[RMDB]
RNA sequence: GGGAACGACUCGAGUAGAGUCGAAAAGACCUAGACUGUGCUCGCUGCAAGCUUCCAGCGAGGCAUGUUGACGGUGCUCACUGGAAGUUAGCAGUGAGGCAUGUUGUCGCAUGAACAUGCCACCGUCGUCGCAUGAACAUGCCACAGUCUAGGUAGACGUAUCAAGGUAGUUCGCUACCUUGAUACGAAAAGAAACAACAACAACAAC
Reactivity to 2A3 in 0.01 (KOAc 150mM, MgCl2 10mM, bicine 150mM(pH8.5), 24C), signal-to-noise 7, nucleotides 027 to 156: g080a000c000c000u000a010g000a000c000u000g000u010g000c000u000c000g010c000u010g000c030a070a030g010c000u000u000c000c000a010g020c020g080a110g030g060c050a050u150g100u260u240g080a060c080g070g010u040g020c010u010c010a030c000u000g000g000a000a000g010u050u030a020g010c000a000g000u010g010a000g010g000c010a050u130g110u110u090g030u050c020g000c000a000u010g000a020a010c000a000u010g010c010c050a110c060c050g210u220c090g030u060c060g020c000a000u000g000a010a010c000a010u000g000c000c000a000c000a000g000u000c000u000a000g000g000u000a000g010a010
Reactivity to DMS in 0.01 (KOAc 150mM, MgCl2 10mM, bicine 150mM(pH8.5), 24C), signal-to-noise 3, nucleotides 027 to 156: g010a000c000c010u000a030g000a010c000u000g010u000g000c020u000c000g040c000u030g000c020a080a180g010c050u000u000c040c010a020g020c000g030a080g020g040c020a010u000g020u010u000g020a160c150g030g080u010g010c020u000c010a040c000u010g040g010a070a080g010u000u000a230g010c010a010g030u000g000a020g010g020c030a030u010g020u000u010g030u000c030g020c050a030u000g020a040a280c010a030u000g030c000c040a110c000c160g030u000c120g000u000c160g010c020a030u010g020a050a280c020a030u000g020c010c010a030c010a020g010u020c010u000a010g000g050u000a010g010a130